[RMDB]
RNA sequence: GGGAACGACUCGAGUAGAGUCGAAAAUCUAAUGGUAUGACAGUGGUGCACACCAUAUCUUCUACUAGAAACCAUUUGUAAAAGUCUAAAGCAUUGAAUUCUGGAUAUAAAUCAGUUUGUGCAAUGCAGUACACUGUGCGAUCAUUAGCAAAUUGAAGGACAAGCAUUUAUUCGUAAAUGCUUGUCCAAAAGAAACAACAACAACAAC
Reactivity to DMS in 0.01 (KOAc 150mM, MgCl2 10mM, bicine 150mM(pH8.5), 24C), signal-to-noise 1, nucleotides 027 to 156: u000c000u000a010a030u000g010g020u010a030u010g020a000c020a060g050u020g060g090u000g040c080a120c040a130c060c070a030u000a110u000c020u000u000c020u000a150c020u000a120g000a200a070a160c050c060a130u010u020u010g030u000a030a130a100a060g020u000c080u000a040a100a190g020c040a030u000u000g010a070a060u000u000c020u000g010g020a300u000a110u000a030a110a220u010c040a000g000u000u000u020g040u000g010c030a080a080u030g040c010a080g020u010a190c040a070c080u000g010u020g000c060g020a060u010c040a020u000u000a030g000c030a090a080a080u010u000g010a100a250
Reactivity to 2A3 in 0.01 (KOAc 150mM, MgCl2 10mM, bicine 150mM(pH8.5), 24C), signal-to-noise 3, nucleotides 027 to 156: u050c010u020a010a000u020g000g000u030a100u230g020a000c000a030g040u000g090g030u070g030c050a020c010a030c120c040a090u070a080u160c010u090u010c010u040a120c000u030a000g140a140a130a050c070c000a130u080u080u180g070u050a100a090a030a000g010u000c080u160a040a020a060g010c000a000u030u030g000a020a020u070u040c010u020g030g040a060u060a050u090a300a100a040u180c010a000g040u040u040u000g030u040g010c050a010a010u020g010c010a000g040u040a010c060a020c020u040g010u080g060c020g030a050u050c010a000u030u050a000g000c020a040a040a140u010u060g020a130a090

This 207-nucleotide RNA was probed chemically with DMS and 2A3. It was measured as part of the RMDB library OK3TST. The 2A3 profile rests on 1,119 reads. For DMS, 1,444 sequencing reads were counted. 2A3 adducts were read by reverse transcription with SuperScript II with manganese.